[RMDB]
RNA sequence: GGGAACGACUCGAGUAGAGUCGAAAAUUGUGAUAUUUUUUCCAUCUUUAAUAUCUAUGAUUUGUAAUAAACAGCAGCCUGGUUUUGGGAAACAAGCCCAGGAGAUGUCAGCUCUGGUGAGUCACUGAAUGGGCUGGCUGACCUCAGCUAAUAAUAGGCAAUUGUUAAGAUUCGUCUUAACAAUUGCAAAAGAAACAACAACAACAAC
Reactivity to 2A3 in 0.01 (KOAc 150mM, MgCl2 10mM, bicine 150mM(pH8.5), 24C), signal-to-noise 1, nucleotides 027 to 156: u020u050g110u060g000a000u010a060u030u090u050u020u050u030c080c000a090u060c110u120u180u070a110a060u050a040u030c010u070a100u190g040a060u160u200u060g020u030a030a220u170a200a120a070c010a010g020c000a000g060c000c000u000g020g000u040u100u150u000g050g030g040a030a230a150c080a000a000g030c010c000c000a030g000g050a060g020a030u010g030u000c020a030g000c010u000c010u020g000g070u030g030a080g100u080c030a000c060u010g060a070a020u160g000g010g030c020u000g000g010c010u000g000a000c010c010u010c060a000g010c000u020a040a030u200a080a070u210a300g140